[RMDB]
RNA sequence: GGGAACGACUCGAGUAGAGUCGAAAAGAACGGAAAGAAUCCUCAAGGUACAUGUCUUAUUCCUAGCAGAAGGGGGGAGCGAGCUGAGGGAUGAAGAGUUCAAGAUUCUAUCAGUGGUGUCCUGUCCGCGAUAUACUUAGUUCGCUAAGUAUAUCGCAAAAGAAACAACAACAACAAC
Reactivity to 2A3 in 0.01 (KOAc 150mM, MgCl2 10mM, bicine 150mM(pH8.5), 24C), signal-to-noise 3, nucleotides 027 to 126: g000a000a000c020g020g120a140a090a050g050a060a040u030c000c010u040c060a050a040g030g000u060a050c020a080u110g080u020c010u040u080a090u100u060c010c010u040a040g050c070a030g110a280a120g010g000g000g010g020g020a020g020c050g020a010g000c010u050g050a030g040g000g000a010u030g020a040a050g030a000g050u050u050c040a040a000g020a040u030u040c010u030a060u030c010a010g000u020g050g030u040g150u060c000c010u010g080u070c060c090
Reactivity to DMS in 0.01 (KOAc 150mM, MgCl2 10mM, bicine 150mM(pH8.5), 24C), signal-to-noise 3, nucleotides 027 to 126: g010a100a080c070g010g020a090a110a100g000a130a070u000c020c010u000c060a130a100g010g000u000a050c070a050u000g000u010c030u010u000a120u000u010c020c020u000a080g000c110a080g000a070a080g000g020g000g000g010g000a040g010c060g000a070g010c060u010g010a090g000g000g010a050u000g000a080a050g000a130g020u000u000c070a080a140g000a060u000u000c030u010a050u000c030a040g020u000g000g010u000g000u010c030c010u010g000u000c160c100
Chemical mapping of a 177-nucleotide RNA with 2A3 and DMS. The RNA was probed in 150 mM KOAc, 10 mM MgCl2 and 150 mM bicine (pH 8.5) at 24 C. 2A3 adducts were read by reverse transcription with SuperScript II with manganese. DMS adducts were read by reverse transcription with MarathonRT.